[RMDB]
The record gives the reactivity of an RNA of 207 nucleotides to DMS and 2A3.
RNA sequence: GGGAACGACUCGAGUAGAGUCGAAAAUGCUGUCGUUGACAGCGCCCAACGCUUCACAACCUGAAAGAAGCGCCUGUUAUCAGGACGGUUGAUCCAUUUACCGGUGCAUACCUCUGCAAACACCGGGUUUAACAAGCAUCUUUCGAGAUGCUUGUAAUCAAUUGAACGUCUUCGGACGUUCAAUUGAAAAAGAAACAACAACAACAAC
Reactivity to DMS in 0.01 (KOAc 150mM, MgCl2 10mM, bicine 150mM(pH8.5), 24C), signal-to-noise 1, nucleotides 027 to 156: u010g020c020u010g050u000c010g000u000u000g020a060c000a000g030c010g030c060c000c010a120a100c000g000c030u010u000c010a130c070a060a110c050c030u040g000a100a230a300g020a080a020g060c030g030c010c000u000g020u000u000a140u000c030a060g040g000a140c030g020g050u000u000g040a190u000c110c060a180u000u010u010a100c000c000g000g010u000g000c010a200u010a130c050c130u010c060u000g030c070a190a130a040c000a030c010c000g010g000g000u000u000u010a150a060c000a010a020g000c010a020u000c010u000u010u000c300g030a050g010a000u000g100c000u000u000g060u000a020a130
Reactivity to 2A3 in 0.01 (KOAc 150mM, MgCl2 10mM, bicine 150mM(pH8.5), 24C), signal-to-noise 2, nucleotides 027 to 156: u130g000c010u000g000u100c070g260u100u220g000a020c000a000g010c000g060c030c000c000a030a040c010g000c000u010u000c010a050c010a130a010c000c010u000g010a000a000a000g000a000a000g000c010g050c010c010u140g020u260u240a180u300c020a000g010g000a000c020g000g000u000u000g000a070u000c050c100a040u060u080u130a090c010c000g000g000u010g000c030a090u080a240c020c100u190c200u210g140c150a110a180a050c010a000c000c020g000g010g000u030u100u040a020a000c000a000a000g000c000a000u010c010u090u080u140c200g130a010g000a000u000g000c000u000u000g000u000a000a030
For 2A3, 998 sequencing reads were counted. The reactions ran in a buffer of 150 mM KOAc, 10 mM MgCl2 and 150 mM bicine (pH 8.5), at 24 C. For DMS, 2,043 sequencing reads were counted. 2A3 adducts were read by reverse transcription with SuperScript II with manganese.